[RMDB]
RNA sequence: GGGAACGACUCGAGUAGAGUCGAAAAUCUAUAGGCGGCUUGUGUUAGCUCAAUUAGACCCCCUUCCUUAUCACAAGGACAGAGGGAUUUCUGUAUCCCAGGGUUUCCUGCCUUGGUGUACGGGAAGAGUCGGCUCACACCUGGGCUUGGAGAAUGAUGGAUAUUUAGCUUUCGAGCUAAAUAUCCAAAAAGAAACAACAACAACAAC
Reactivity to DMS in 0.01 (KOAc 150mM, MgCl2 10mM, bicine 150mM(pH8.5), 24C), signal-to-noise 2, nucleotides 027 to 156: u000c060u000a120u000a090g010g060c030g040g020c040u000u020g020u010g000u000u000a050g010c010u010c040a090a150u000u010a120g000a200c000c000c000c010c020u000u000c000c010u000u040a200u000c240a130c160a070a020g020g010a020c120a020g000a100g020g040g010a070u000u000u000c020u010g000u000a080u000c300c030c020a090g010g020g000u000u000u000c130c080u000g010c010c000u000u020g030g030u000g070u000a000c100g000g000g000a030a050g000a150g030u000c040g000g000c060u000c050a080c020a070c030c020u000g040g020g040c010u010u010g000g000a100g000a090a110u000g000a300
Reactivity to 2A3 in 0.01 (KOAc 150mM, MgCl2 10mM, bicine 150mM(pH8.5), 24C), signal-to-noise 1, nucleotides 027 to 156: u040c020u010a100u070a070g000g000c020g040g020c050u030u060g040u000g020u040u020a000g000c020u020c060a120a200u120u070a060g030a060c000c010c010c000c020u000u000c020c000u110u070a190u300c060a010c020a110a010g010g000a020c050a050g070a130g040g000g020a000u010u040u010c010u020g020u030a020u040c000c000c020a000g000g030g010u020u170u050c020c000u050g000c000c000u000u010g020g030u010g000u010a020c020g000g000g000a010a010g020a020g070u030c020g000g010c000u030c050a010c000a010c000c030u050g000g050g000c030u020u060g050g000a060g050a060a080u050g070a050